[RMDB]
RNA sequence: GGGAACGACUCGAGUAGAGUCGAAAAAGACCGCCGCGGUGCUCGGCGUCUGGGCCGUCGCCGGUUCGCUGCUCGCGCCGAUCGUGUUGCGGCGCAUGGCCGGUCGUGAAUCCGGCGCCGCCAUGGAAGGAUUAAUUAUGUUCGCAUAAUUAAUCCUAAAAGAAACAACAACAACAAC
Reactivity to 2A3 in 0.01 (KOAc 150mM, MgCl2 10mM, bicine 150mM(pH8.5), 24C), signal-to-noise 8, nucleotides 027 to 126: a010g030a020c020c060g020c030c010g010c040g110g110u100g030c130u080c060g010g000c020g010u000c050u090g030g020g000c070c020g040u090c050g010c020c010g030g010u050u040c010g000c020u040g010c020u030c050g010c010g020c040c040g070a150u160c070g020u070g050u170u190g020c020g010g000c000g000c000a040u080g060g000c050c040g020g010u060c030g010u030g020a020a030u050c020c010g010g000c000g010c010c000g000c000c010a070u110g050g030a070
Reactivity to DMS in 0.01 (KOAc 150mM, MgCl2 10mM, bicine 150mM(pH8.5), 24C), signal-to-noise 9, nucleotides 027 to 126: a070g000a100c090c050g020c050c050g020c050g010g010u000g010c090u000c010g010g010c030g010u010c030u010g010g010g010c070c040g010u000c070g020c030c010g000g010u000u000c040g010c030u000g010c030u000c140g010c030g010c070c040g000a050u010c090g020u010g010u010u010g010c010g000g000c000g010c060a030u000g000g020c070c100g000g000u000c170g010u000g000a060a060u000c030c010g010g000c010g010c040c090g010c020c060a070u000g000g010a200